[RMDB]
RNA sequence: GGGAACGACUCGAGUAGAGUCGAAAAAUUGCCCACGGUUGAGAGUAAGGGUGUCAUUUAAAAGUGGGGAACCGAGCCUAGCAAAGCUUUGAGCUAGGAACGGAAUUUAUGAAGCUUACCAAAGAGAAAGUUUGUCUGUGGACGUUCUCUGAGGGAACAUACAUUGGUACUUCGGUACCAAUGUAUGAAAAGAAACAACAACAACAAC
Reactivity to DMS in 0.01 (KOAc 150mM, MgCl2 10mM, bicine 150mM(pH8.5), 24C), signal-to-noise 4, nucleotides 027 to 156: a120u000u000g020c000c000c010a110c150g000g020u010u000g010a100g010a100g030u000a090a070g010g010g000u000g010u020c040a090u000u000u000a050a050a070a120g040u000g010g020g010g010a130a180c010c000g010a160g020c010c000u000a040g030c010a050a150a140g010c030u010u000u000g000a300g000c000u000a020g010g010a050a080c030g010g010a080a080u000u000u010a050u020g000a040a080g010c020u010u000a180c010c000a030a280a040g000a040g000a020a020a030g020u000u010u000g000u000c110u000g040u000g020g010a020c000g000u000u010c010u000c010u000g020a300g010g000g000a070a190
Reactivity to 2A3 in 0.01 (KOAc 150mM, MgCl2 10mM, bicine 150mM(pH8.5), 24C), signal-to-noise 6, nucleotides 027 to 156: a000u070u110g060c010c010c010a020c040g090g000u100u110g030a040g000a020g050u110a090a080g020g010g020u030g020u030c040a040u040u110u300a070a120a020a020g020u040g000g000g010g010a010a000c000c010g000a010g000c000c000u000a000g000c000a010a020a020g000c010u020u020u040g010a000g000c000u000a000g000g010a000a000c010g010g040a020a020u140u110u040a040u080g150a010a000g010c000u000u130a040c010c000a010a020a000g010a000g000a000a060a030g010u050u130u090g100u060c110u070g120u200g080g020a010c010g010u040u000c000u000c000u010g000a020g000g000g000a010a000